[RMDB]
RNA sequence: GGGAACGACUCGAGUAGAGUCGAAAAUUAGAUCUGCAGGGUUAGUGCUCUGGCUACUGCACAGAAACGUAACCGGUAUAAUAGGAUAUGAAAAUGAGUUUAUAUGUAGUCUAGGUAACUAGGCUACCGUCCAUGUAAUCUUCGGAUUACAUGGACGAAAAGAAACAACAACAACAAC
Reactivity to DMS in 0.01 (KOAc 150mM, MgCl2 10mM, bicine 150mM(pH8.5), 24C), signal-to-noise 1, nucleotides 027 to 126: u010u020a180g000a130u000c070u010g020c060a080g010g020g010u000u000a020g040u020g010c120u010c000u020g000g000c010u020a090c100u000g020c050a060c060a120g000a000a100a130c030g020u000a030a100c010c020g000g000u000a050u030a040a090u000a110g000g010a060u000a040u010g000a040a100a050a110u000g020a140g000u000u000u000a040u000a070u030g000u000a000g010u000c000u010a010g000g000u000a100a080c000u000a000g000g000c000u000a000c000
Reactivity to 2A3 in 0.01 (KOAc 150mM, MgCl2 10mM, bicine 150mM(pH8.5), 24C), signal-to-noise 1, nucleotides 027 to 126: u090u030a070g060a120u060c010u080g010c030a020g040g000g040u000u060a040g030u060g160c090u030c000u110g000g000c010u110a180c060u150g000c030a010c020a110g120a030a130a020c040g010u050a040a000c050c020g010g010u060a100u040a080a080u150a150g000g010a000u010a020u230g090a060a080a020a050u100g040a040g080u090u250u020a150u060a120u240g000u000a000g000u020c000u000a010g000g000u010a070a030c020u000a010g020g010c000u010a000c000

Chemical mapping of a 177-nucleotide RNA with DMS and 2A3. The reactions ran in a buffer of 150 mM KOAc, 10 mM MgCl2 and 150 mM bicine (pH 8.5), at 24 C. For DMS, 886 sequencing reads were counted. Reactivities are given for positions 27 through 126.